[RMDB]
The record gives the reactivity of an RNA of 177 nucleotides to DMS and 2A3. For 2A3, 8,356 sequencing reads were counted. Conditions: 150 mM KOAc, 10 mM MgCl2 and 150 mM bicine (pH 8.5), 24 C. The data come from the RNA Mapping Database (RMDB), library TTRDES.

RNA sequence: GGGAACGACUCGAGUAGAGUCGAAAAGAUAUGGAGCGUGAGGGACAUGCCUAUGUAGUAUCGGAAACGAUAUGAAAGGCAACAGCCCUACGCUCCUAAGUCAAAGCCCGCGUGUUCGCACGCGGGCCCUGACGUUAAUGUUCGCAUUAACGUCAGGAAAAGAAACAACAACAACAAC
Reactivity to DMS in 0.01 (KOAc 150mM, MgCl2 10mM, bicine 150mM(pH8.5), 24C), signal-to-noise 4, nucleotides 027 to 126: g000a090u010a300u000g010g000a010g020c000g020u000g010a050g010g000g000a050c070a220u000g010c000c000u000a090u020g020u000a200g000u000a010u000c010g000g000a160a070a250c000g010a010u010a020u010g000a080a140a050g010g000c000a050a060c300a160g000c010c000c010u010a020c000g010c000u000c000c010u000a010a040g000u000c020a110a140a150g010c000c010c000g020c000g070u000g000u010u030c250g020c010a010c000g050c000g000g000g000c010
Reactivity to 2A3 in 0.01 (KOAc 150mM, MgCl2 10mM, bicine 150mM(pH8.5), 24C), signal-to-noise 4, nucleotides 027 to 126: g050a010u050a020u190g000g000a010g030c050g010u180g300a070g010g020g010a040c070a250u270g000c010c000u080a120u220g070u050a050g020u000a010u000c010g020g000a090a030a040c020g010a000u020a010u050g080a140a040a010g000g000c040a040a060c070a040g010c010c000c000u000a010c000g000c000u000c000c000u000a020a010g010u010c030a180a130a050g000c010c010c000g000c000g000u050g010u030u180c300g030c170a000c000g000c090g000g020g000c000